[RMDB]
RNA sequence: GGGAACGACUCGAGUAGAGUCGAAAACGGCCUUAUGGUUUGGUGCAUCAUCCUCGGCACGCCUUCGAAAGGGUUCGGCCUUUAUCCAAAAAACAGUUCUUGGGCAUUCGGUCGGCUACGCCAGAACCUUAAGAUGGGUCUUCGGACCCAUCUUAAGAAAAGAAACAACAACAACAAC
Reactivity to 2A3 in 0.01 (KOAc 150mM, MgCl2 10mM, bicine 150mM(pH8.5), 24C), signal-to-noise 2, nucleotides 027 to 126: c010g050g030c020c060u160u220a110u100g040g050u050u090u130g060g000u050g050c040a070u070c000a030u080c050c020u030c030g020g020c000a000c020g050c060c000u040u070c080g140a130a130a070g050g020g000u090u080c020g110g030c010c000u030u040u030a100u110c030c050a100a080a000a000a000a040c050a060g020u060u040c060u030u030g070g020g010c020a060u040u060c060g060g000u000c030g010g000c030u030a030c010g000c000c010a040g040a070a030c020
Reactivity to DMS in 0.01 (KOAc 150mM, MgCl2 10mM, bicine 150mM(pH8.5), 24C), signal-to-noise 2, nucleotides 027 to 126: c080g020g010c030c020u000u000a080u010g020g030u000u010u000g020g000u010g000c020a100u000c080a060u010c040c020u000c100g010g000c040a060c070g010c070c040u010u010c070g000a060a160a130g000g000g020u000u000c070g010g030c020c050u000u000u000a040u000c040c060a010a050a070a060a100a080c140a100g000u010u000c020u000u010g000g010g000c070a050u000u010c090g020g010u000c040g020g020c060u000a080c120g020c020c040a080g000a090a090c160
Structure probing data (2A3 and DMS) for a 177-nucleotide construct. For 2A3 the reverse transcriptase was SuperScript II with manganese. It was measured as part of the RMDB library OK2TRN. 2A3 is a SHAPE reagent: it acylates the 2'-hydroxyl of flexible nucleotides of all four kinds.